[RMDB]
An RNA of 207 nucleotides, treated with DMS and 2A3 and read out base by base. DMS adducts were read by reverse transcription with MarathonRT. 2A3 adducts were read by reverse transcription with SuperScript II with manganese. For DMS, 4,350 sequencing reads were counted. It was measured as part of the RMDB library OK3TST.
RNA sequence: GGGAACGACUCGAGUAGAGUCGAAAAGAAGGUGUUCAAGGCGUACCACUCGUGGAGGGAAAAGCGCUAUAGUGUUGAUGUCGAUUUUGACAGCGGUCGCAUACAUUCGCUCGGGUAACUCCCCGCUGAUAUUGUACUCUAUCAACGUAGUGGCAGAAUCGCUGUAAAUGUUCGCAUUUACAGCGAUAAAAGAAACAACAACAACAAC
Reactivity to DMS in 0.01 (KOAc 150mM, MgCl2 10mM, bicine 150mM(pH8.5), 24C), signal-to-noise 2, nucleotides 027 to 156: g040a130a030g000g010u000g020u020u010c050a120a130g040g020c020g030u010a130c050c020a070c080u000c030g010u010g000g020a070g010g000g000a090a070a120a120g030c010g030c050u000a080u000a080g020u000g040u010u000g010a160u010g020u000c010g010a280u000u000u000u000g000a050c050a090g010c030g020g000u000c070g020c090a080u000a010c050a120u000u010c020g030c030u000c050g000g020g000u010a090a060c110u020c000c030c010c010g000c020u010g020a120u000a030u010u010g020u000a070c080u010c080u000a060u010c010a060a050c030g030u000a010g010u000g000g040c050a090g000a100
Reactivity to 2A3 in 0.01 (KOAc 150mM, MgCl2 10mM, bicine 150mM(pH8.5), 24C), signal-to-noise 3, nucleotides 027 to 156: g080a030a020g020g020u070g030u110u120c090a060a040g040g010c030g050u060a060c000c010a090c060u090c080g070u070g040g050a030g050g000g000a010a050a040a060g030c010g000c010u040a050u120a080g100u070g040u050u070g040a080u040g040u090c050g040a090u030u030u050u290g100a040c040a020g010c030g040g000u060c040g020c070a040u110a150c040a060u070u100c050g000c020u010c030g020g000g000u020a040a040c020u060c030c000c000c020g000c030u030g020a020u020a040u120u100g050u080a080c020u000c030u060a050u070c010a030a020c010g040u070a030g040u030g050g020c020a010g080a130